The data come from the RNA Mapping Database (RMDB), library OK1LIB. The record gives the reactivity of an RNA of 177 nucleotides to DMS and 2A3. For DMS the reverse transcriptase was MarathonRT. The RNA was probed in 150 mM KOAc, 10 mM MgCl2 and 150 mM bicine (pH 8.5) at 24 C.
RNA sequence: GGGAACGACUCGAGUAGAGUCGAAAAGAUGAGAGUUGCACUGUCCUUAGACAGUGCGUUUGAAUCUCACUUCAAACGUUGUCCUUCUAAGGACAACGUGAAGAGUGAGCUCUUCACAGCUCUCAUAGAUAGGUUUCAGAUUCGUUUGAGAUCUAUCAAAAGAAACAACAACAACAAC
Reactivity to DMS in 0.01 (KOAc 150mM, MgCl2 10mM, bicine 150mM(pH8.5), 24C), signal-to-noise 9, nucleotides 027 to 126: g000a030u000g000a010g010a010g010u000u030g010c000a010c000u000g010u000c000c300u020u050a100g010a010c000a000g010u000g010c010g010u020u020u010g010a030a000u050c010u000c000a000c000u000u000c020a050a300a010c000g010u000u000g010u000c000c000u000u050c270u050a160a050g000g000a000c000a000a000c000g010u000g000a190a240g000a010g000u000g000a000g000c010u000c000u000u000c000a040c300a210g000c000u000c000u000c000a000u000a040
Reactivity to 2A3 in 0.01 (KOAc 150mM, MgCl2 10mM, bicine 150mM(pH8.5), 24C), signal-to-noise 9, nucleotides 027 to 126: g180a010u020g000a000g000a000g020u130u300g020c000a000c000u000g010u020c040c070u070u050a120g000a000c000a000g000u000g000c000g000u010u000u020g020a000a020u300c000u000c000a000c000u040u050c010a050a010a000c000g000u000u000g000u000c010c000u050u220c090u200a120a070g000g000a000c000a000a000c000g000u000g010a090a020g000a000g000u000g000a000g000c000u000c000u000u000c000a000c000a000g000c000u000c000u000c000a000u010a010